[RMDB]
RNA sequence: GGGAACGACUCGAGUAGAGUCGAAAAGGAGCUCGAUGCUAUGUGGUAAUUAUACUCUUAGUUAUCACUACUUUACGUUAGUAGAGUAGAGUUAUGAUAGAGUAAUCGUAACUUAUAGCAUCGAGAAGAUAGGAGUCUGAUUCGUUAGAUUUCUAUCAAAAGAAACAACAACAACAAC
Reactivity to 2A3 in 0.01 (KOAc 150mM, MgCl2 10mM, bicine 150mM(pH8.5), 24C), signal-to-noise 9, nucleotides 027 to 126: g170g020a080g040c000u000c000g000a000u000g000c000u000a000u010g010u000g010g000u000a010a000u020u010a030u030a100c040u030c020u050u020a000g000u000u000a010u000c000a000c010u000a000c000u010u000u000a010c010g200u100u280a080g000u010a000g000a000g000u000a000g000a000g000u000u000a000u010g020a000u010a040g300a040g170u300a060a030u000c000g000u000a000a000c000u000u010a000u000a000g000c000a000u000c000g000a000g000a000a000
Reactivity to DMS in 0.01 (KOAc 150mM, MgCl2 10mM, bicine 150mM(pH8.5), 24C), signal-to-noise 7, nucleotides 027 to 126: g020g010a140g010c010u000c000g000a010u000g010c000u000a000u000g000u000g010g000u000a010a000u000u000a020u010a140c090u010c060u010u010a040g010u000u000a000u000c000a010c000u000a010c000u000u000u000a000c000g010u050u080a100g010u000a010g010a000g010u000a000g000a010g000u000u000a000u000g000a010u000a070g010a260g010u070a050a020u000c010g020u000a010a010c000u000u000a000u010a000g000c000a010u000c000g000a000g010a030a060